[RMDB]
RNA sequence: GGGAACGACUCGAGUAGAGUCGAAAAUCGUCCUUCUUCUUUCUCAACAUUCCGACGAUGUUUCCCAGCCAGGGGUUUUCAUCCUCAAGUUUCUUGAUCUUCUUGUUGAUUCGCCGGAGCUCCUUCUCUACUAUAGUAUGUUCGCAUACUAUAGUAGAAAAGAAACAACAACAACAAC
Reactivity to DMS in 0.01 (KOAc 150mM, MgCl2 10mM, bicine 150mM(pH8.5), 24C), signal-to-noise 3, nucleotides 027 to 126: u000c040g020u010c010c070u000u000c050u010u000c040u000u010u000c030u020c040a120a150c120a120u000u000c040c070g010a040c050g010a020u000g000u030u000u000c010c020c000a170g010c100c110a100g010g010g010g000u010u000u030u010c040a080u000c020c030u000c060a080a120g020u010u000u000c040u000u000g010a080u000c030u010u010c020u000u000g020u000u000g000a100u000u000c050g010c040c020g030g020a110g010c070u000c060c020u000u010c040u010
Reactivity to 2A3 in 0.01 (KOAc 150mM, MgCl2 10mM, bicine 150mM(pH8.5), 24C), signal-to-noise 3, nucleotides 027 to 126: u030c010g000u010c030c000u050u060c010u070u030c020u040u140u020c040u040c040a060a210c020a120u120u080c030c030g000a010c010g010a030u020g020u000u080u000c000c000c000a010g020c030c060a030g000g050g030g000u060u100u150u200c030a040u050c000c000u010c020a020a030g030u040u050u050c020u040u090g050a080u030c010u110u020c020u070u090g060u060u050g050a060u060u060c020g020c040c010g060g000a030g030c020u060c030c020u070u010c020u000